[RMDB]
RNA sequence: GGGAACGACUCGAGUAGAGUCGAAAAACCGGCGGUAAAUCAACUCAGUUGAAAGCCGCGAGCGCUUUGGGUGCGAACUCAAAGGACAGCAGAUCCGGUGUAAUUCCGGGGCCGACGGUUAGAGUCCGCUUGUAUAAUUGUUCGCAAUUAUACAAGCAAAAGAAACAACAACAACAAC
Reactivity to DMS in 0.01 (KOAc 150mM, MgCl2 10mM, bicine 150mM(pH8.5), 24C), signal-to-noise 3, nucleotides 027 to 126: a050c010c000g000g000c010g020g000u010a060a190a160u000c030a010a030c020u000c160a160g030u000u000g000a030a190a200g010c040c070g020c060g010a150g030c070g000c000u000u000u010g000g010g010u000g000c300g000a190a010c020u010c000a010a010a030g010g010a120c020a150g010c020a080g000a150u000c000c010g000g010u000g010u000a130a300u000u000c000c010g000g000g000g000c030c020g000a030c030g000g000u000u030a080g010a280g000u000c040c080
Reactivity to 2A3 in 0.01 (KOAc 150mM, MgCl2 10mM, bicine 150mM(pH8.5), 24C), signal-to-noise 2, nucleotides 027 to 126: a040c010c010g000g000c040g000g010u110a200a150a220u050c010a000a030c040u100c300a150g010u010u000g030a100a060a050g050c000c050g010c020g010a030g000c060g000c010u000u010u010g000g000g000u030g020c010g050a050a020c000u000c010a010a020a000g020g050a090c050a060g020c000a020g030a130u010c000c000g000g000u000g020u010a030a070u090u020c000c000g030g000g010g000c040c010g010a010c010g030g000u040u050a050g010a010g230u030c020c010